RNA sequence: GGGAACGACUCGAGUAGAGUCGAAAAAAAAGAUAUGGAUGCGUGAACUACGUCACAGCUAACGUUGAAACACUUUCGGAAACGAAAGUGUGGAGUUAGCUUUGACGCACGCAUCCUAAGUCAAAAAGAUAUAUACGGAGUUCGCUCCGUAUAUAUCAAAAGAAACAACAACAACAAC
Reactivity to 2A3 in 0.01 (KOAc 150mM, MgCl2 10mM, bicine 150mM(pH8.5), 24C), signal-to-noise 3, nucleotides 027 to 126: a000a010a010a020g020a000u020a010u060g000g000a000u000g010c010g030u000g010a080a030c100u240a060c300g000u000c000a000c010a010g020c000u000a010a000c020g270u300u030g000a000a010a000c000a000c000u010u010u000c010g000g000a000a000a010c000g000a000a000a000g010u010g010u000g000g000a020g000u000u000a010g000c000u000u010u000g000a000c000g000c000a000c000g000c000a000u000c010c000u000a000a000g000u000c010a000a020a000a140a120
Reactivity to DMS in 0.01 (KOAc 150mM, MgCl2 10mM, bicine 150mM(pH8.5), 24C), signal-to-noise 5, nucleotides 027 to 126: a070a070a110a110g000a010u000a010u000g000g000a010u000g030c010g010u000g000a070a040c160u020a300c020g000u000c000a010c090a020g000c000u000a000a010c010g000u000u010g000a120a150a020c000a000c000u000u000u000c000g000g000a010a010a030c000g000a010a010a010g000u000g000u000g000g000a010g010u000u000a010g010c000u000u000u000g000a000c000g000c000a000c010g010c000a010u000c000c000u000a000a050g000u010c000a070a090a100a150a120